[RMDB]
RNA sequence: GGGAACGACUCGAGUAGAGUCGAAAACAUGGGGAACUACAUCUGUGUCGCGAGUUCGAUUCUCGCCAGGGCCUGGUCCUGUAGCUCAGUUGGUAGUGCAAGCUGUUCCCCGGACACUUGUCGUCAUAAAAGUUGCCCCCGUUCGCGGGGGCAACAACUCAAUAUGUAACUUCGGUUACAUAUUGAGAAAAGAAACAACAACAACAAC
Reactivity to DMS in 0.01 (KOAc 150mM, MgCl2 10mM, bicine 150mM(pH8.5), 24C), signal-to-noise 1, nucleotides 027 to 156: c040a140u010g010g040g000g020a070a090c010u010a030c040a080u000c060u000g000u000g030u000c080g030c010g040a030g000u000u010c070g010a300u010u010c000u010c010g030c000c090a110g020g020g000c000c090u010g050g000u000c030c010u000g000u000a070g020c050u000c020a130g020u010u010g020g010u020a080g000u000g010c030a090a070g000c040u010g000u000u000c000c000c010c010g020g000a100c040a060c220u000u000g020u000c000g000u010c030a120u000a090a090a090a150g010u000u000g020c000c050c040c000c000g040u000u000c210g020c050g040g000g020g080g000c000a000a010c000a050a100
Reactivity to 2A3 in 0.01 (KOAc 150mM, MgCl2 10mM, bicine 150mM(pH8.5), 24C), signal-to-noise 2, nucleotides 027 to 156: c070a110u150g000g000g010g010a000a010c020u080a000c040a010u020c020u000g000u020g060u160c060g010c010g000a020g000u110u170c070g040a050u160u030c000u010c000g030c010c010a010g000g010g020c020c260u190g080g060u080c010c000u020g100u130a050g060c030u020c030a020g010u040u090g070g030u060a030g010u010g040c040a050a060g060c070u040g010u040u010c020c000c000c000g020g000a020c020a010c060u040u140g050u140c020g030u040c050a050u180a120a090a020a020g000u000u000g000c010c030c000c040c060g010u020u030c070g020c000g090g000g000g000g000c010a010a000c000a000a000
About this RNA
An RNA of 207 nucleotides, treated with DMS and 2A3 and read out base by base. For 2A3 the reverse transcriptase was SuperScript II with manganese. For DMS the reverse transcriptase was MarathonRT. It was measured as part of the RMDB library M2RFPK. Conditions: 150 mM KOAc, 10 mM MgCl2 and 150 mM bicine (pH 8.5), 24 C.